[RMDB]
RNA sequence: GGGAACGACUCGAGUAGAGUCGAAAAGCCGACUAGCCGAAGAAAAAGGGCGUGUCAUCGGUAUGGCUAAAUUAAAAACAAUAAAAGAACAAGAAAAGCCUGAUUUAAUGUUAGACGCAGGAGACGCGCUUAGCAGUGAGUUCGCUCACUGCUAAGCAAAAGAAACAACAACAACAAC
Reactivity to DMS in 0.01 (KOAc 150mM, MgCl2 10mM, bicine 150mM(pH8.5), 24C), signal-to-noise 1, nucleotides 027 to 126: g070c050c010g000a060c100u000a060g010c040c020g070a090a050g000a010a010a030a140a090g000g000g020c020g000u000g040u000c040a040u000c010g040g050u030a050u040g000g000c000u000a040a070a050u040u000a000a060a020a090a000c140a150a180u030a090a090a070a000g010a200a120c010a100a070g000a040a160a150a110g000c020c000u000g020a050u010u010u030a040a040u010g030u020u000a090g040a030c110g020c000a040g000g000a150g020a100c010g030c150
Reactivity to 2A3 in 0.01 (KOAc 150mM, MgCl2 10mM, bicine 150mM(pH8.5), 24C), signal-to-noise 2, nucleotides 027 to 126: g050c000c000g040a030c030u010a000g000c000c000g140a120a110g130a070a290a020a000a000g080g000g000c000g020u040g040u000c010a020u030c030g040g000u150a090u050g010g000c000u000a020a020a020u190u230a000a020a150a040a000c050a080a000u190a090a140a020a010g200a080a000c200a190a000g100a210a290a000a000g110c000c050u090g070a150u020u010u300a180a020u050g020u080u080a010g130a170c070g000c100a010g120g000a060g000a020c000g010c000
The record gives the reactivity of an RNA of 177 nucleotides to DMS and 2A3. The data come from the RNA Mapping Database (RMDB), library OK1LIB. For 2A3 the reverse transcriptase was SuperScript II with manganese.